[RMDB]
RNA sequence: GGGAACGACUCGAGUAGAGUCGAAAAAAAUACAACCUUCUGGAACCCAUCAUGAAUCUUGAUCUAACAAUCCCUCAAUCUGAUGUUGGUACGGUGUUACAAGAUCUAACAGGAGCAAGAAAGGCUCAACUCUGGUCUAAUUCGUUAGACCAGAGUUAAAAGAAACAACAACAACAAC
Reactivity to 2A3 in 0.01 (KOAc 150mM, MgCl2 10mM, bicine 150mM(pH8.5), 24C), signal-to-noise 1, nucleotides 027 to 126: a000a000a000u120a010c030a070a080c000c010u040u000c010u050g010g090a090a090c000c070c000a020u090c010a060u120g120a100a030u030c020u060u060g020a020u070c010u030a050a040c010a080a110u120c030c040c000u060c010a060a090u010c050u140g030a000u190g110u100u020g000g010u020a040c040g060g070u020g010u000u000a010c010a010a000g030a070u040c000u000a010a000c030a060g010g020a010g000c010a050a080g120a170a130a000g080g030c000u000c010
Reactivity to DMS in 0.01 (KOAc 150mM, MgCl2 10mM, bicine 150mM(pH8.5), 24C), signal-to-noise 3, nucleotides 027 to 126: a070a080a080u000a070c060a070a100c070c020u010u000c060u000g010g000a120a100c010c010c020a070u000c100a040u000g000a100a020u000c040u000u000g010a120u010c080u000a060a090c100a070a080u000c030c000c020u000c040a040a060u010c120u010g030a050u010g000u000u010g000g020u000a030c140g000g000u010g000u010u000a040c110a030a050g020a030u000c050u010a040a100c130a080g000g000a020g000c040a060a040g000a100a100a090g010g030c070u010c030
This 177-nucleotide RNA was probed chemically with 2A3 and DMS. Source: RMDB library OK2TST, as collected in RNAgym. DMS adducts were read by reverse transcription with MarathonRT. Conditions: 150 mM KOAc, 10 mM MgCl2 and 150 mM bicine (pH 8.5), 24 C.